RNA sequence: GGGAACGACUCGAGUAGAGUCGAAAAGAAUGCCCAUUCGUGGGCAUUCCACCGCAGCGAAGCCGAAAGGCAUUUUAUGCGUUCGCUGGCGAAAGCCUAAAAAAGCUCCACUUUUCGAAGUGGAGAACAGGAAGAAUAACUUCGGUUAUUCUUCCUGAAAAGAAACAACAACAACAAC
Reactivity to DMS in 0.01 (KOAc 150mM, MgCl2 10mM, bicine 150mM(pH8.5), 24C), signal-to-noise 4, nucleotides 027 to 126: g010a010a000u000g000c000c000c000a030u000u010c180g040u010g010g010g010c000a000u000u000c010c040a160c140c020g020c020a020g010c090g000a030a110g000c010c020g000a070a060a120g010g020c030a080u000u010u000u010a090u010g010c110g010u000u000c060g000c040u000g010g010c020g000a100a080a150g000c010c020u010a010a030a080a080a090a160g000c000u000c000c000a010c010u000u000u000u020c150g000a020a020g010u000g000g000a010g010a020a050
Reactivity to 2A3 in 0.01 (KOAc 150mM, MgCl2 10mM, bicine 150mM(pH8.5), 24C), signal-to-noise 2, nucleotides 027 to 126: g000a000a000u000g000c000c000c000a000u030u090c250g080u020g000g000g000c000a000u000u000c000c000a040c040c010g000c010a000g010c010g010a060a010g020c010c030g070a120a050a020g070g000c010a010u010u040u020u070a110u110g050c010g010u010u040c020g010c050u040g040g000c000g020a080a020a010g030c010c040u150a100a100a030a040a010a020g030c000u000c000c000a020c000u030u030u100u140c210g060a020a000g000u000g010g000a000g000a000a020